[RMDB]
RNA sequence: GGGAACGACUCGAGUAGAGUCGAAAAGAUAUGGAAACCACAUAGCGUUGGCCACGUUGAAAUCGGAAACGAUGGAGUGGCAACGUGUAAAGUGGUUUCCUAAGUCAAACGCCUGUUCGCAGGCGAAUCCUAUCGAGUUGUUCGCAACUCGAUAGGAAAAAGAAACAACAACAACAAC
Reactivity to DMS in 0.01 (KOAc 150mM, MgCl2 10mM, bicine 150mM(pH8.5), 24C), signal-to-noise 2, nucleotides 027 to 126: g000a020u000a300u000g000g010a020a020a000c000c030a020c000a080u000a240g000c000g010u010u000g020g010c000c000a000c020g000u000u000g000a110a120a040u000c000g020g000a100a120a110c010g020a000u000g000g000a120g030u010g000g000c000a000a000c000g010u000g000u020a050a100a100g020u000g000g000u000u000u000c000c000u000a000a050g040u000c020a040a110a210c070g010c000c000u020g000u010u010c130g030c030a000g000g000c000g000a020a020
Reactivity to 2A3 in 0.01 (KOAc 150mM, MgCl2 10mM, bicine 150mM(pH8.5), 24C), signal-to-noise 2, nucleotides 027 to 126: g020a020u060a010u110g010g000a000a000a000c000c000a000c020a040u090a030g000c030g020u000u030g300g200c000c000a000c030g170u300u080g030a070a040a000u020c010g020g020a020a050a040c000g000a000u000g030g010a020g000u010g000g010c010a010a010c000g000u010g080u160a080a130a030g020u010g000g020u020u000u010c000c000u000a030a000g020u000c020a070a040a200c010g010c000c000u000g020u060u080c300g000c070a030g000g000c010g030a010a050
Chemical mapping of a 177-nucleotide RNA with DMS and 2A3. The RNA was probed in 150 mM KOAc, 10 mM MgCl2 and 150 mM bicine (pH 8.5) at 24 C. Values cover nucleotides 27 to 126. Source: RMDB library TTRDEL, as collected in RNAgym.